[RMDB]
RNA sequence: GGGAACGACUCGAGUAGAGUCGAAAAAUGUGCUGCGGCCUCAGUUUGAGAUGUUUGGAGUUGUACCGCAAGCUGGACCAAUAACACGCGCGAUAGCACAAGCAGCGUACCAGUAGAUGGGCAUGUAAUCCCAGGAUUUAUUCGUAAAUCCUGGGAUAAAAGAAACAACAACAACAAC
Reactivity to DMS in 0.01 (KOAc 150mM, MgCl2 10mM, bicine 150mM(pH8.5), 24C), signal-to-noise 5, nucleotides 027 to 126: a070u000g010u000g010c010u000g020c140g000g000c050c020u000c030a050g010u010u000u000g000a090g010a090u000g020u000u010u010g020g010a180g010u010u000g040u010a090c030c030g000c050a080a110g030c040u010g000g000a080c090c070a110a110u010a090a110c140a040c070g000c040g000c040g020a080u000a040g000c070a050c090a060a120g000c020a090g000c050g000u000a090c030c020a060g010u010a070g000a140u010g010g000g020c040a060u000g000u000a140
Reactivity to 2A3 in 0.01 (KOAc 150mM, MgCl2 10mM, bicine 150mM(pH8.5), 24C), signal-to-noise 2, nucleotides 027 to 126: a000u090g030u020g000c000u000g010c030g020g060c030c010u010c050a050g000u010u100u190g090a070g040a060u100g160u120u130u180g070g010a100g040u040u080g040u090a170c020c000g020c020a000a030g000c010u000g050g010a000c000c010a040a030u110a100a020c080a010c080g060c000g000c010g060a070u110a040g070c010a000c010a050a070g010c040a000g000c010g000u020a170c000c000a000g060u060a040g020a130u090g040g000g000c060a000u100g090u150a090